[RMDB]
RNA sequence: GGGAACGACUCGAGUAGAGUCGAAAAGAAUGUAAGGGCGUAAUCGCGCCUUGACGUGAGUGAGACAAGACAGAAGGCUAUCCAAAGUAAGAUAGCAUAGCUCACAAUACGCUGAUCUGUCGUAGAACCGAUAUCCUGAUUUCGAUCAGGAUAUCGGAAAAGAAACAACAACAACAAC
Reactivity to DMS in 0.01 (KOAc 150mM, MgCl2 10mM, bicine 150mM(pH8.5), 24C), signal-to-noise 3, nucleotides 027 to 126: g020a150a050u020g000u000a060a000g010g060g060c020g030u010a100a170u040c270g010c010g000c000c040u000u000g000a080c040g020u010g000a160g010u050g010a040g010a120c120a060a110g000a000c100a020g020a040a130g000g030c040u000a000u010c030c040a060a090a100g020u010a150a100g000a010u010a000g000c010a030u010a060g000c040u000c020a040c010a120a110u020a060c090g010c050u010g000a100u010c010u010g020u000c010g000u060a120g000a150a180
Reactivity to 2A3 in 0.01 (KOAc 150mM, MgCl2 10mM, bicine 150mM(pH8.5), 24C), signal-to-noise 3, nucleotides 027 to 126: g150a050a050u250g000u150a010a110g030g000g010c020g030u020a160a080u140c160g020c000g000c000c000u000u020g030a020c030g020u030g060a010g000u040g030a030g030a050c030a200a020g030a000c000a020g190a170a020g060g000c020u020a000u000c020c010a010a010a270g220u160a150a040g050a010u020a000g000c000a030u030a010g010c000u000c000a010c000a000a010u060a010c030g000c040u040g020a040u010c010u010g000u000c010g050u040a040g070a190a050